Annotation
The record gives the reactivity of an RNA of 177 nucleotides to 2A3.
RNA sequence: GGGAACGACUCGAGUAGAGUCGAAAACGAGAACGGUUCGCCGUUCUCGAAAAGUCAGAAGGUAAUACCAAGCGAAAAAUAAAACUGACAAUAAAAACGCAAAAACCGAGUGCUUCGGCACUCGGAAGUUGUUGUUACUCUUCGGAGUAACAACAACAAAAGAAACAACAACAACAAC
Reactivity to 2A3 in 0.01 (KOAc 150mM, MgCl2 10mM, bicine 150mM(pH8.5), 24C), signal-to-noise 1, nucleotides 027 to 126: c000g010a000g000a000a000c000g020g020u020u000c060g040c010c000g000u000u000c000u000c000g000a000a000a000a000g000u000c000a010g000a160a130g110g000u100a160a080u070a300c000c000a030a060g060c030g220a080a080a040a080a050u130a030a100a040a020c010u020g030a000c010a010a010u140a070a070a010a010a000c040g000c020a000a140a000a000a050c010c010g000a000g000u010g000c000u050u170c200g090g000c040a000c010u060c000g040g000a000a000